The data come from the RNA Mapping Database (RMDB), library OK1LIB. Structure probing data (2A3 and DMS) for a 177-nucleotide construct. For 2A3 the reverse transcriptase was SuperScript II with manganese. The DMS profile rests on 2,321 reads. Conditions: 150 mM KOAc, 10 mM MgCl2 and 150 mM bicine (pH 8.5), 24 C. For 2A3, 9,919 sequencing reads were counted. Values are in units of 0.01, from 0 to 300, in steps of 10. For DMS the reverse transcriptase was MarathonRT.
RNA sequence: GGGAACGACUCGAGUAGAGUCGAAAAUUUUUGAAUUUGGAUGUAUCAUCAUUGCUGCAUCAUAGCCAUCAAAUACACCAUGUUCUAUCAAGUAAGGCUUUCCAUCUCCAGUUUCUUCAGCAGGUGUCCACUAUAAUUUAUUCGUAAAUUAUAGUGGAAAAGAAACAACAACAACAAC
Reactivity to 2A3 in 0.01 (KOAc 150mM, MgCl2 10mM, bicine 150mM(pH8.5), 24C), signal-to-noise 8, nucleotides 027 to 126: u150u110u030u050u080g060a040a040u050u030u060g100g030a090u020g040u040a040u060c060a010u040c030a030u070u100g010c020u020g030c030a100u050c040a070u200a030g010c020c010a040u070c040a030a080a020u060a020c030a010c010c020a020u030g020u010u030c050u070a100u100c060a060a030g070u100a080a040g080g000c000u040u040u000c030c020a060u020c020u000c030c020a020g010u010u050u000c020u070u090c030a060g010c040a040g090g140u090g120u060
Reactivity to DMS in 0.01 (KOAc 150mM, MgCl2 10mM, bicine 150mM(pH8.5), 24C), signal-to-noise 2, nucleotides 027 to 126: u010u010u030u060u000g000a000a110u020u020u040g010g020a110u010g020u010a030u000c070a080u050c190a140u020u040g020c080u000g010c010a050u010c070a090u010a090g010c040c050a140u000c100a070a070a030u010a070c020a080c010c030a020u000g000u040u010c030u020a100u030c090a080a060g000u000a050a100g020g010c030u010u020u020c010c030a020u010c010u010c010c060a030g000u000u000u010c040u000u000c020a100g020c040a010g000g010u000g000u020